RNA sequence: GGGAACGACUCGAGUAGAGUCGAAAAGAUGAGAGUACACCUGUACGAGAAUAGGAGGGUUAGUACAGCAACUAACCAUUGUAUAGCUGUAUACAACGCGAAGAUCUAGUACUUCGAAACUCUCAGAGAUAGGUUUCUACUUCGGUAGAGAUCUAUCAAAAGAAACAACAACAACAAC
Reactivity to 2A3 in 0.01 (KOAc 150mM, MgCl2 10mM, bicine 150mM(pH8.5), 24C), signal-to-noise 9, nucleotides 027 to 126: g160a060u080g000a010g000a000g020u050a020c030a030c060c020u010g010u030a010c040g020a010g070a120a140u190a150g100g090a050g020g070g000u010u010a010g010u030a020c060a060g020c030a030a010c010u030a010a020c010c010a030u040u080g020u020a060u030a050g010c030u020g030u030a020u020a060c080a070a010c050g030c010g170a040a010g020a060u030c030u060a030g020u040a050c000u020u060c030g020a050a020a010c000u000c000u000c010a000g010a000
Reactivity to DMS in 0.01 (KOAc 150mM, MgCl2 10mM, bicine 150mM(pH8.5), 24C), signal-to-noise 9, nucleotides 027 to 126: g000a130u010g010a010g000a010g010u000a050c120a140c110c050u000g010u000a010c000g000a050g000a060a060u020a070g010g010a300g000g000g010u000u000a130g010u010a030c060a050g010c090a060a030c030u000a030a090c220c170a140u020u020g000u010a040u020a080g010c060u010g000u000a020u010a070c160a030a040c100g010c030g010a130a140g010a050u010c030u010a080g010u010a010c000u010u010c120g000a100a060a040c010u000c000u000c000a040g010a150